[RMDB]
RNA sequence: GGGAACGACUCGAGUAGAGUCGAAAAAUUCUCAGGCGGCAAUCGCCUUUUCUGGCCUUUGCUUUGUACUGUUUUUGAUCAGUGUGAUAUUACUGGGAAUUAAUGUCUUAACACCUAUCAGGAAGCGAUGGUAUAUCACUUUCGAGUGAUAUACCAUAAAAGAAACAACAACAACAAC
Reactivity to DMS in 0.01 (KOAc 150mM, MgCl2 10mM, bicine 150mM(pH8.5), 24C), signal-to-noise 6, nucleotides 027 to 126: a060u020u000c000u000c000a040g000g020c150g020g000c010a020a010u000c300g000c000c000u000u010u040u020c200u020g000g020c000c050u010u000u000g010c000u000u020u020g010u020a040c050u000g010u000u000u020u020u020g000a070u030c060a050g020u010g010u000g010a100u030a050u020u020a070c040u000g000g020g000a040a030u010u000a060a050u030g010u000c020u000u020a140a090c090a070c030c030u000a030u010c070a040g010g000a050a090g000c130g000
Reactivity to 2A3 in 0.01 (KOAc 150mM, MgCl2 10mM, bicine 150mM(pH8.5), 24C), signal-to-noise 9, nucleotides 027 to 126: a000u030u000c010u010c010a020g080g030c050g030g000c020a020a030u040c010g010c000c000u090u040u040u040c060u050g010g010c000c000u020u020u010g020c000u080u100u130g070u080a070c040u040g130u030u030u010u100u140g110a080u100c050a020g000u000g020u030g120a050u030a030u220u090a140c070u050g020g050g080a010a020u050u060a070a050u100g070u040c020u060u090a100a020c020a030c030c010u070a060u110c060a020g060g090a070a010g090c110g060